[RMDB]
RNA sequence: GGGAACGACUCGAGUAGAGUCGAAAAAUUGAAGCUGUGCAUGUUUAUGGGGGCACAAUUUGAUGUUUCAAUACAUGUAUAUGUUGUGUAAUGAUCAAAUCGGAGUACUUAGCAUAUCUAUCAUCUCGUGCAUUUAUCAUUUCUUUGUGGCGAGAAACCAGGAGUACUCAUUCGUGAGUACUCCUGGAAAAGAAACAACAACAACAAC
Reactivity to 2A3 in 0.01 (KOAc 150mM, MgCl2 10mM, bicine 150mM(pH8.5), 24C), signal-to-noise 2, nucleotides 027 to 156: a000u080u120g040a030a000g010c020u000g010u010g010c000a030u010g100u060u190u140a090u100g000g000g000g050g000c020a000c030a020a060u050u070u060g120a180u040g050u000u050u000c020a020a000u050a030c010a050u020g060u060a110u070a000u120g000u040u040g010u050g000u020a030a040u040g060a040u090c200a060a090a130u090c100g080g000a060g020u030a010c040u000u120a060g040c030a020u000a050u150c020u110a070u100c090a080u030c020u010c020g050u040g000c030a020u050u030u100a090u100c140a070u000u170u030c040u060u030u020g010u040g030g030c000g150a010g060a040a010a010